[RMDB]
RNA sequence: GGGAACGACUCGAGUAGAGUCGAAAACAAAGAGCUCCGUAGGCGGCUUUGUCGCGACAGCUGUGAAAAUCUCGUCUCUCAAUUGUAGGCUUUGCAGCUUGAUACGGGCGGGCCUUGAGAUUUGGUAAAUUUUAAUAUAAUUCGUUAUGUUAAAAUUAAAAGAAACAACAACAACAAC
Reactivity to DMS in 0.01 (KOAc 150mM, MgCl2 10mM, bicine 150mM(pH8.5), 24C), signal-to-noise 5, nucleotides 027 to 126: c000a090a110a140g010a190g010c040u040c020c040g020u000a070g010g010c010g010g000c020u030u020u050g010u000c000g010c020g000a130c180a040g000c000u000g020u010g000a060a040a080a050u020c050u010c050g000u010c080u010c040u010c200a070a110u020u030g010u030a030g010g000c010u000u010u010g000c010a020g010c010u010u000g000a160u010a020c040g010g010g030c030g010g000g000c010c000u000u010g010a040g000a060u010u010u000g000g010u020a070
Reactivity to 2A3 in 0.01 (KOAc 150mM, MgCl2 10mM, bicine 150mM(pH8.5), 24C), signal-to-noise 2, nucleotides 027 to 126: c000a000a080a010g070a010g010c010u020c060c000g020u020a020g000g050c010g000g000c020u080u060u260g000u000c000g000c000g020a020c030a000g000c000u000g020u000g040a020a020a020a050u040c030u010c020g040u000c020u000c010u000c040a060a110u040u090g100u090a000g000g010c000u000u040u050g010c010a010g000c000u030u070g010a010u010a020c000g000g010g000c000g000g000g000c000c000u010u030g000a000g000a000u070u040u100g030g000u070a020